[RMDB]
RNA sequence: GGGAACGACUCGAGUAGAGUCGAAAAAGAAUAUGAAAGCCAGGCAGUAUCGUUGACAUGUGAUCAUUAUGUAUGUAAAGCACAAGAUUAAAAGAAACCAGAUGUUACUUCAAGGUUUGAAGUUUUAUGUAAGAUUUAGCCAACAUGGAAAAAGCCACAAAAUGGAUCAUUUCGAUGAUCCAUUUUGAAAAGAAACAACAACAACAAC
Reactivity to 2A3 in 0.01 (KOAc 150mM, MgCl2 10mM, bicine 150mM(pH8.5), 24C), signal-to-noise 2, nucleotides 027 to 156: a000g070a000a000u120a020u140g070a090a040a000g010c010c010a000g000g020c000a000g030u120a100u120c060g030u040u010g020a000c010a060u040g020u050g070a040u070c000a030u060u110a040u060g040u030a010u010g070u040a050a070a070g030c010a000c010a060a020g020a070u050u250a050a110a010a010g060a080a050a000c040c010a000g020a080u040g050u120u050a020c000u040u020c000a030a090g180g000u060u070u100g010a010a010g010u000u020u030u190a080u120g010u030a050a000g000a150u030u060u050a060g000c010c010a020a080c040a040u010g000g010a010a050a080a120a000g030c030c010a020
Reactivity to DMS in 0.01 (KOAc 150mM, MgCl2 10mM, bicine 150mM(pH8.5), 24C), signal-to-noise 3, nucleotides 027 to 156: a110g000a070a110u000a090u010g000a120a080a120g010c010c020a080g000g000c010a140g000u000a050u010c050g030u000u010g010a080c050a090u000g030u000g000a090u000c020a080u000u010a070u000g020u000a060u000g020u010a060a050a080g010c070a080c030a080a080g020a120u000u010a040a050a060a160g000a100a070a090c040c020a070g020a180u000g020u000u000a050c030u000u000c030a040a140g010g030u000u000u000g010a080a070g020u000u010u010u010a030u010g010u000a030a090g000a100u000u000u000a100g010c040c020a040a050c030a080u010g040g000a040a040a050a070a110g020c030c050a110